[RMDB]
RNA sequence: GGGAACGACUCGAGUAGAGUCGAAAACCCUCUUUCGAGAGGGCCGACGGGGUCCAGCCAACAGCGACUGCCAGCCGAGGAUCCUGAAGCCUCCACGGGGGAGGCUGACAGUCGACAUGGCUGGACGGAGGCACCCACCCAUGAUGUUCGCAUCAAAUCAUAUCAUAUGGUUCGCCAUAUGAUAUGAAAAAGAAACAACAACAACAAC
Reactivity to 2A3 in 0.01 (KOAc 150mM, MgCl2 10mM, bicine 150mM(pH8.5), 24C), signal-to-noise 2, nucleotides 027 to 156: c000c030c000u000c010u030u050u090c160g050a010g000a010g010g010g050c040c050g110a070c110g020g020g020g020u000c000c000a000g000c000c000a080a060c070a180g160c000g000a000c000u000g020c000c020a010g010c030c010g030a180g060g020a030u030c000c020u020g000a050a030g010c000c020u050c010c000a070c080g030g000g000g000g000a010g000g000c000u000g020a000c000a000g000u020c000g070a180c020a040u030g030g000c000u000g000g000a000c000g010g000a000g020g000c020a050c000c010c000a040c010c010c010a060u110g020a020u040g090u130u100c220g030c120a040u090c050a030a040a080
Reactivity to DMS in 0.01 (KOAc 150mM, MgCl2 10mM, bicine 150mM(pH8.5), 24C), signal-to-noise 2, nucleotides 027 to 156: c010c010c000u000c000u000u000u000c210g010a040g040a040g020g010g040c030c030g050a180c110g000g000g000g020u010c060c020a070g000c030c010a020a050c200a190g040c000g000a060c020u010g020c010c000a030g020c000c020g020a090g070g010a070u000c020c000u020g020a080a130g030c040c000u000c010c000a300c050g020g000g030g030g030a060g010g000c000u010g000a060c000a020g030u000c020g000a020c050a300u000g000g010c030u000g010g000a000c060g010g010a060g020g020c060a200c030c000c050a150c040c000c020a160u020g000a080u000g010u000u010c150g020c040a070u000c030a060a100a300